An RNA of 170 nucleotides, treated with DMS and 2A3 and read out base by base. Conditions: 150 mM KOAc, 10 mM MgCl2 and 150 mM bicine (pH 8.5), 24 C. It was measured as part of the RMDB library 15KLIB. For DMS the reverse transcriptase was MarathonRT. The DMS profile rests on 9,154 reads.

[RMDB]
RNA sequence: GGGAACGACUCGAGUAGAGUCGAAAACCCAUUGGGUUCACACCCCCAGGCCGCGGGCCGGCUGUUCUUCUUUCUCUUUCGUCGUCAUCCUUGGCUAGCCUCUGGAGUUCCUCUUCUUCCUCUUGGCAUACUGCCCGCUUCGGCGGGCAGAAAAGAAACAACAACAACAAC
Reactivity to DMS in 0.01 (KOAc 150mM, MgCl2 10mM, bicine 150mM(pH8.5), 24C), signal-to-noise 1, nucleotides 027 to 129: c000c000c020a120u050u040g010g000g000u000u050c130a150c210a160c070c020c000c040c050a190g010g000c110c040g060c100g000g050g020c040c000g010g040c040u040g010u040u030c030u000u030c040u010u000u000c040u020c030u010u070u000c000g060u030c120g000u000c020a150u020c010c050u010u050g040g010c070u010a060g060c040c010u020c010u050g000g040a140g010u000u000c020c000u030c060u000u000c030u020u000c000c010u010c020u020u010g000g020c120a030u070a120
Reactivity to 2A3 in 0.01 (KOAc 150mM, MgCl2 10mM, bicine 150mM(pH8.5), 24C), signal-to-noise 3, nucleotides 027 to 129: c010c000c000a000u060u150g030g020g030u080u100c080a010c010a060c110c020c020c040c020a030g020g020c000c020g130c040g050g040g050c030c000g030g020c030u060g010u040u000c040u030u010c010u000u080u000c050u030c000u010u070u020c030g010u010c000g060u020c010a040u010c030c030u020u000g060g020c040u040a020g050c010c000u030c030u060g030g010a050g010u060u020c000c000u000c020u050u000c010u020u010c000c010u030c000u010u010g010g040c000a030u080a120